RNA sequence: GGGAACGACUCGAGUAGAGUCGAAAAUUUGACGAAGUAUAAAGGUGGAGAUAUUUCAUAUAAUCCAGAAGCCCCGAUUUAUUCAGCAAAAUAUCAACUAACCAAUGAUGAUUAUAAUGUAAAGCAAAUCUUACUAAAUCUUCGGAUUUAGUAAGAUAAAAGAAACAACAACAACAAC
Reactivity to 2A3 in 0.01 (KOAc 150mM, MgCl2 10mM, bicine 150mM(pH8.5), 24C), signal-to-noise 3, nucleotides 027 to 126: u020u000u110g040a030c040g000a060a000g000u050a030u110a240a120a010g060g020u080g000g030a100g020a090u010a000u040u040u030c050a010u090a000u030a220a110u080c030c040a050g100a150a000g070c000c000c030c010g010a020u080u030u060a160u170u260c000a000g000c020a100a140a000a000u140a000u060c040a010a110c010u180a070a020c040c000a070a030u020g040a060u020g050a000u140u300a070u090a220a150u140g070u180a080a080a110g030c050a190a000
Reactivity to DMS in 0.01 (KOAc 150mM, MgCl2 10mM, bicine 150mM(pH8.5), 24C), signal-to-noise 2, nucleotides 027 to 126: u060u010u020g010a140c060g000a070a040g020u010a030u000a060a060a140g010g000u020g000g000a110g010a100u010a020u000u020u020c020a110u010a090u010a090a110u010c010c040a140g000a140a150g040c070c030c040c060g030a090u000u020u010a040u010u020c090a100g020c100a070a030a090a070u020a000u010c020a010a050c090u000a070a050c090c060a070a040u020g000a080u000g000a050u020u000a060u040a090a010u010g000u010a050a100a060g020c100a020a080
An RNA of 177 nucleotides, treated with 2A3 and DMS and read out base by base. The 2A3 profile rests on 1,257 reads. In probing experiments dimethyl sulfate is read out at A N1 and C N3, which are open when not base-paired. 2A3 adducts were read by reverse transcription with SuperScript II with manganese. Source: RMDB library OK1LIB, as collected in RNAgym. DMS adducts were read by reverse transcription with MarathonRT. The RNA was probed in 150 mM KOAc, 10 mM MgCl2 and 150 mM bicine (pH 8.5) at 24 C.